[RMDB]
RNA sequence: GGGAACGACUCGAGUAGAGUCGAAAAGAUAUGGAGUUGGAGCUUUUGACGAGAUGUGUGUCGGAAACGACACCAUUCUCGAUAAGCUCCACCUCCUAAGUCAAAGACCAACCUUCGGGUUGGUCAAGUGCGAACAUAAGUUCGCUUAUGUUCGCACAAAAGAAACAACAACAACAAC
Reactivity to 2A3 in 0.01 (KOAc 150mM, MgCl2 10mM, bicine 150mM(pH8.5), 24C), signal-to-noise 6, nucleotides 027 to 126: g000a010u030a010u060g000g010a000g010u020u000g010g000a020g010c030u140u160u280u300g300a300c150g000a000g000a010u010g290u000g000u000g000u040c000g000g010a010a020a020c000g010a000c000a000c000c000a020u180u020c000u000c010g020a030u040a030a000g000c000u000c000c000a000c000c000u000c000c000u000a020a000g010u010c030a050a080a110g000a010c000c000a000a010c000c010u040u070c300g120g000g000u000u000g080g000u000c000a000a000
Reactivity to DMS in 0.01 (KOAc 150mM, MgCl2 10mM, bicine 150mM(pH8.5), 24C), signal-to-noise 4, nucleotides 027 to 126: g000a020u000a110u010g000g000a010g010u000u000g000g000a010g010c000u000u000u000u000g020a210c110g010a010g010a010u000g010u010g030u000g010u010c000g010g000a020a040a040c000g010a000c000a010c000c000a000u000u000c000u000c000g020a050u010a010a020g000c000u000c000c000a000c030c000u000c000c000u000a010a050g000u000c010a110a160a140g000a020c000c000a000a010c000c000u000u020c230g020g010g020u000u000g000g000u000c000a010a040
This 177-nucleotide RNA was probed chemically with 2A3 and DMS. For 2A3, 16,705 sequencing reads were counted. 2A3 adducts were read by reverse transcription with SuperScript II with manganese. Source: RMDB library TTRDEL, as collected in RNAgym. The reactions ran in a buffer of 150 mM KOAc, 10 mM MgCl2 and 150 mM bicine (pH 8.5), at 24 C.